[RMDB]
RNA sequence: GGGAACGACUCGAGUAGAGUCGAAAAGAUAUGGAGGUACACUAUCUAACCACUCUUUGAUCUCGGAAACGAGGGAGAGUGUUAGACGAAUGUACCUCCUAAGUCAAAAGGCACGUUCGCGUGCCAACUCACAUCAUUGGUUCGCCAAUGAUGUGAGAAAAGAAACAACAACAACAAC
Reactivity to DMS in 0.01 (KOAc 150mM, MgCl2 10mM, bicine 150mM(pH8.5), 24C), signal-to-noise 2, nucleotides 027 to 126: g000a010u010a300u020g000g000a010g010g010u000a000c000a020c060u010a260u010c010u010a000a000c140c050a010c000u000c000u000u010u010g000a040u000c000u000c010g000g010a110a060a120c010g020a000g000g030g000a000g000a000g030u020g000u000u000a000g010a010c150g010a070a060u000g020u000a000c000c000u000c000c000u020a000a070g000u000c050a090a060a080a130g000g000c000a000c020g010u010u020c160g010c020g010u000g010c020c010a010a040
Reactivity to 2A3 in 0.01 (KOAc 150mM, MgCl2 10mM, bicine 150mM(pH8.5), 24C), signal-to-noise 3, nucleotides 027 to 126: g050a040u060a030u190g020g000a000g000g020u020a000c020a010c050u060a060u020c000u000a000a020c140c050a040c080u010c040u240u290u090g130a150u100c010u000c000g050g000a140a100a070c020g010a010g000g020g000a010g000a010g000u000g000u000u000a010g000a020c010g090a300a150u030g000u000a000c010c000u000c000c000u000a000a000g000u020c000a000a000a030a090g010g000c010a000c010g030u080u100c280g000c000g100u000g000c000c000a000a010